[RMDB]
RNA sequence: GGGAACGACUCGAGUAGAGUCGAAAACAUCCGGUCGAUGUAUCACAUCAAUUAGGUAAAAGUGGUGCCCGGUGUGUGUGAUGCGCGUGCACAGAUGUGUGUCUGCAGAGGGGCGUUAACUGUACGGACGACAGCUAAGCUUCGGCUUAGCUGUCGUAAAAGAAACAACAACAACAAC
Reactivity to DMS in 0.01 (KOAc 150mM, MgCl2 10mM, bicine 150mM(pH8.5), 24C), signal-to-noise 1, nucleotides 027 to 126: c080a090u030c020c000g010g000u000c020g000a040u020g020u020a070u010c090a070c040a040u000c030a040a070u010u020a110g000g000u000a000a070a060a060g000u000g000g040u000g030c010c040c040g010g000u010g060u000g030u000g070u020g000a010u000g010c050g020c050g020u000g000c190a080c220a110g020a030u010g010u010g000u000g000u020c070u000g000c030a010g000a300g000g000g010g040c060g040u000u000a090a020c020u030g000u000a040c110g000g010